This 207-nucleotide RNA was probed chemically with 2A3 and DMS. The 2A3 profile rests on 2,941 reads.
[RMDB]
RNA sequence: GGGAACGACUCGAGUAGAGUCGAAAAUGAGUUAGGUGUUGUCAGCUACAGAAGAGAAGCCAAAUUAUAUUAAUGUGUAUGAGUGAAUUCUUACUUCUCUCAAAUGGGACAUACCAAAUCAAUUUGGAAAUGUAGCUGGCAAGUGAAAGGACACCCAAUUAAAUACCUGAUUCGUCAGGUAUUUAAUAAAAGAAACAACAACAACAAC
Reactivity to 2A3 in 0.01 (KOAc 150mM, MgCl2 10mM, bicine 150mM(pH8.5), 24C), signal-to-noise 4, nucleotides 027 to 156: u190g010a040g080u100u140a080g020g080u080g030u070u020g000u010c000a010g020c000u000a010c000a030g090a170a040g050a180g040a120a020g030c000c000a030a010a020u070u040a080u050a060u200u080a210a170u060g040u010g000u030a020u030g030a020g080u110g090a120a060u110u070c020u070u040a160c050u080u030c050u030c000u020c070a120a180a170u210g010g000g010a000c000a010u050a010c000c000a000a000a050u080c020a000a010u000u000u000g010g000a010a050a090u030g000u000a000g000c000u000g000g000c000a000a010g010u030g070a120a040a040g040g010a010c010a010c040c010c000a000
Reactivity to DMS in 0.01 (KOAc 150mM, MgCl2 10mM, bicine 150mM(pH8.5), 24C), signal-to-noise 4, nucleotides 027 to 156: u000g010a120g020u000u000a080g030g030u000g020u000u010g020u000c020a020g010c000u000a030c010a070g000a140a110g010a110g030a100a110g030c020c050a020a060a050u000u000a120u000a130u000u000a070a100u010g020u000g030u000a050u000g010a130g020u000g010a100a150u000u010c080u010u000a070c070u000u000c010u000c010u000c020a040a110a140u010g030g010g010a120c030a060u000a120c030c030a030a050a090u000c110a040a090u000u000u000g010g010a090a080a070u000g000u000a010g020c000u000g010g010c010a000a030g000u010g000a070a080a100g010g000a140c050a100c010c010c020a100